[RMDB]
This 207-nucleotide RNA was probed chemically with DMS and 2A3. 2A3 is a SHAPE reagent: it acylates the 2'-hydroxyl of flexible nucleotides of all four kinds. The reactions ran in a buffer of 150 mM KOAc, 10 mM MgCl2 and 150 mM bicine (pH 8.5), at 24 C.

RNA sequence: GGGAACGACUCGAGUAGAGUCGAAAAUCCGAACCGUUCGCGGUUCGGAACACAAGCAGGGUGGCGAAAUGGAAUCGCGUUGGGCUCAUAACUCAAAAGUCAGAGGAUCGAAACCUCUCUCUGCUACCAUGGUUGAUCGGUUUUUCGAAACCGAUAAAGUUAGAGCUGUAUUCGUACAGCUCUAACUAAAAGAAACAACAACAACAAC
Reactivity to DMS in 0.01 (KOAc 150mM, MgCl2 10mM, bicine 150mM(pH8.5), 24C), signal-to-noise 2, nucleotides 027 to 156: u000c000c000g000a010a010c020c000g030u000u000c250g050c040g010g030u030u000c020g000g030a010a030c070a070c090a220a110g020c050a040g010g000g030u000g060g000c000g000a070a080a130u020g000g010a130a140u000c050g000c020g020u040u010g000g030g030c000u010c300a160u000a060a030c010u000c010a040a070a100a030g020u000c040a090g000a030g020g020a070u000c080g020a300a080a100c020c000u000c000u000c010u000c000u000g000c020u000a060c040c050a060u000g020g000u010u010g000a030u000c000g040g020u010u000u000u000u030c270g030a050a040a000c000c000g030a020u000a030a010
Reactivity to 2A3 in 0.01 (KOAc 150mM, MgCl2 10mM, bicine 150mM(pH8.5), 24C), signal-to-noise 3, nucleotides 027 to 156: u000c010c000g010a010a000c000c000g040u060u090c260g010c020g060g000u020u020c000g010g010a010a010c040a000c000a000a050g000c020a000g020g060g040u110g030g030c050g050a060a060a080u220g060g070a110a140u040c030g010c020g050u040u040g000g010g020c030u000c060a070u190a220a070c020u000c120a100a010a000a050g080u050c050a010g020a000g060g010a060u130c060g110a040a070a090c000c010u000c000u000c010u010c000u010g030c010u040a070c050c020a070u130g130g030u040u050g030a010u020c000g030g060u000u020u010u060u060c180g110a030a000a000c000c000g020a010u030a030a140
DMS adducts were read by reverse transcription with MarathonRT.